[RMDB]
RNA sequence: GGGAACGACUCGAGUAGAGUCGAAAAGAUAUGGACGUGUAUGACCGAUAAGACCCAUUCGGAAACGAAUGAGGUCUUUUGACGGUCGAAGCGUCCUAAGUCAAAGAAUCGACUUCGGUCGAUUCAAGCAAUUACCACAGUUCGCUGUGGUAAUUGCAAAAGAAACAACAACAACAAC
Reactivity to 2A3 in 0.01 (KOAc 150mM, MgCl2 10mM, bicine 150mM(pH8.5), 24C), signal-to-noise 2, nucleotides 027 to 126: g040a000u070a030u160g010g000a010c020g190u270g020u300a130u300g000a020c000c080g070a070u060a260a010g000a000c000c010c000a000u020u000c000g010g040a160a050a040c060g000a010a030u040g040a110g090g010u020c000u000u000u010u030g010a010c000g040g000u010c000g010a010a000g000c000g000u010c000c000u020a000a000g010u020c010a030a050a170g000a010a010u000c000g000a020c020u000u110c300g190g000u000c000g000a000u000u000c000a000a020
Reactivity to DMS in 0.01 (KOAc 150mM, MgCl2 10mM, bicine 150mM(pH8.5), 24C), signal-to-noise 3, nucleotides 027 to 126: g000a050u000a290u000g010g000a010c000g030u020g000u030a220u020g020a010c000c000g020a200u010a020a050g010a000c000c000c000a010u000u010c000g010g000a120a080a140c010g010a030a010u000g000a100g030g010u000c000u000u000u000u000g030a230c060g010g010u010c010g000a150a300g000c000g000u000c000c000u010a010a070g010u010c030a120a140a200g000a010a010u000c010g000a010c000u000u020c300g040g010u000c010g020a000u000u000c000a120a130